[RMDB]
RNA sequence: GGGAACGACUCGAGUAGAGUCGAAAAGAUAUGGACUCGAGGACCAUGGCGAAGAACUCGGAAACGAGGGAGCCAGGUCUCGAGUCCUAAGUCAAAAUCAAUAUUGAGGUUCGCCUCAAUAUUGAAACAUCCAUAAGAUGUUCGCAUCUUAUGGAUGAAAAGAAACAACAACAACAAC
Reactivity to DMS in 0.01 (KOAc 150mM, MgCl2 10mM, bicine 150mM(pH8.5), 24C), signal-to-noise 9, nucleotides 027 to 126: g010a030u010a300u000g000g010a010c000u000c000g010a030g010g010a040c010c010a100u000g020g010c000g010a100a140g010a100a150c010u000c000g000g000a120a090a190c000g000a020g000g000g000a070g010c000c000a020g000g000u000c000u000c000g000a010g000u000c000c000u000a010a050g000u010c040a080a080a130a150u000c010a000a000u000a000u000u000g000a010g010g010u000u020c270g020c000c010u000c000a000a000u000a000u000u000g000a020a090a190
Reactivity to 2A3 in 0.01 (KOAc 150mM, MgCl2 10mM, bicine 150mM(pH8.5), 24C), signal-to-noise 5, nucleotides 027 to 126: g030a010u070a040u130g000g010a000c000u000c010g010a040g050g090a030c030c050a300u060g010g000c040g140a300a040g020a100a060c000u000c000g010g030a060a050a030c010g000a010g000g010g000a000g000c000c000a000g000g010u000c000u000c000g000a000g000u000c000c000u000a010a000g000u000c020a000a010a000a240u030c000a010a000u000a010u000u010g000a000g030g040u060u130c270g150c050c000u000c000a000a010u000a000u000u000g000a000a000a010